An RNA of 177 nucleotides, treated with DMS and 2A3 and read out base by base. 2A3 adducts were read by reverse transcription with SuperScript II with manganese. Reactivities are given for positions 27 through 126.
RNA sequence: GGGAACGACUCGAGUAGAGUCGAAAAGCAUUCCACUUCGGUGGAAUGCAAAUGCCGGCUGCAAGAAAAGUGCUUCAAAGAGUGGGAGCACUGCCGAAGAAUAAAGUUCCAUGUUCGCAUGGAACAAGUAACAAUACCAGUUCGCUGGUAUUGUUACAAAAGAAACAACAACAACAAC
Reactivity to DMS in 0.01 (KOAc 150mM, MgCl2 10mM, bicine 150mM(pH8.5), 24C), signal-to-noise 5, nucleotides 027 to 126: g000c010a000u000u000c000c000a010c000u000u010c160g040g030u010g000g000a010a000u000g000c000a010a040a070u010g010c080c000g010g010c020u000g020c130a110a100g000a090a090a110a050g010u000g020c000u000u000c010a100a090a140g020a200g030u010g010g000g000a000g000c000a010c000u000g020c030c010g000a080a130g000a100a110u010a050a100a130g000u000u000c000c000a000u000g000u010u020c190g020c000a000u000g000g000a010a000c010a020a080
Reactivity to 2A3 in 0.01 (KOAc 150mM, MgCl2 10mM, bicine 150mM(pH8.5), 24C), signal-to-noise 9, nucleotides 027 to 126: g010c000a000u010u010c000c000a000c000u040u050c160g100g000u010g000g000a000a000u000g000c000a010a010a030u110g040c020c000g000g020c020u060g020c060a080a040g060a130a140a030a020g010u000g000c000u020u010c030a100a170a110g150a120g100u170g040g010g000a010g000c000a000c000u000g000c000c000g070a080a040g070a070a090u220a130a090a020g000u000u000c000c000a000u010g070u010u070c240g000c070a000u000g000g000a000a000c000a000a010